This 177-nucleotide RNA was probed chemically with DMS and 2A3. Values are in units of 0.01, from 0 to 300, in steps of 10. The RNA was probed in 150 mM KOAc, 10 mM MgCl2 and 150 mM bicine (pH 8.5) at 24 C. For DMS the reverse transcriptase was MarathonRT.

[RMDB]
RNA sequence: GGGAACGACUCGAGUAGAGUCGAAAAGGCAUCUAGCCGGUAGAGGCCAGGGAUGCUGCUGCUAAACAUCCUAGAAUGCACAGGAGAGCCCCCACGCCAAAGAGUUAUACAGCCCAAAAUGUCAGUAGUAUGAACUAAGGUUCGCCUUAGUUCAUACAAAAGAAACAACAACAACAAC
Reactivity to DMS in 0.01 (KOAc 150mM, MgCl2 10mM, bicine 150mM(pH8.5), 24C), signal-to-noise 5, nucleotides 027 to 126: g010g010c010a040u000c030u000a110g020c030c010g020g020u010a080g030a160g000g030c020c100a110g020g000g000a020u000g000c020u000g000c100u000g010c040u010a070a090a120c080a060u010c020c020u000a100g020a110a100u010g000c030a060c110a060g010g010a090g000a160g010c030c030c020c010c020a080c090g010c030c050a040a090a090g010a080g000u000u010a080u010a080c140a080g000c000c010c040a050a040a090a080u020g020u000c070a060g010u010a170
Reactivity to 2A3 in 0.01 (KOAc 150mM, MgCl2 10mM, bicine 150mM(pH8.5), 24C), signal-to-noise 2, nucleotides 027 to 126: g040g020c030a010u010c040u130a020g040c030c020g000g000u090a140g060a080g050g020c040c040a050g020g090g000a030u060g020c010u020g040c020u020g000c020u090a120a110a080c020a030u070c000c000u020a090g090a210a040u100g050c050a030c060a080g000g040a050g060a050g120c040c000c000c010c000a010c010g000c010c000a090a090a000g000a010g000u000u000a080u010a100c050a000g010c010c000c000a040a040a010a020u190g030u040c030a000g000u070a020